[RMDB]
RNA sequence: GGGAACGACUCGAGUAGAGUCGAAAAUAAGUCAGCAGGUGGAAACACUUUGUGCGUGGGUUAGGUAGCCUCAUAUACAUGAACGACUGAUGUAGAGUUCGGUUGGGGAGAUAAGUAUCUAAUGCGUUGACCAUAGGAUAUUCGUAUCCUAUGGUCAAAAAGAAACAACAACAACAAC
Reactivity to 2A3 in 0.01 (KOAc 150mM, MgCl2 10mM, bicine 150mM(pH8.5), 24C), signal-to-noise 4, nucleotides 027 to 126: u170a050a010g070u040c010a030g000c010a000g000g040u080g040g030a070a090a030c050a010c020u150u140u080g090u060g010c040g050u090g000g110g000u020u060a010g000g040u000a020g020c020c010u050c020a030u110a010u060a130c080a040u130g050a060a020c040g150a060c080u090g080a110u100g050u110a070g020a050g060u000u000c000g010g010u020u010g000g000g040g000a060g030a100u130a170a020g080u050a040u040c010u010a060a040u150g040c030g030u000
Reactivity to DMS in 0.01 (KOAc 150mM, MgCl2 10mM, bicine 150mM(pH8.5), 24C), signal-to-noise 5, nucleotides 027 to 126: u020a090a080g010u010c060a140g030c080a050g010g020u000g000g000a110a110a110c060a020c050u000u010u020g000u010g000c060g010u010g000g010g010u010u000a020g000g010u010a050g010c040c000u000c040a040u000a110u030a060c090a060u020g010a040a040c040g030a110c040u010g010a070u010g000u020a050g000a240g000u000u000c020g000g010u000u000g000g000g000g000a100g000a050u020a060a130g000u010a020u000c020u000a050a050u000g010c060g010u000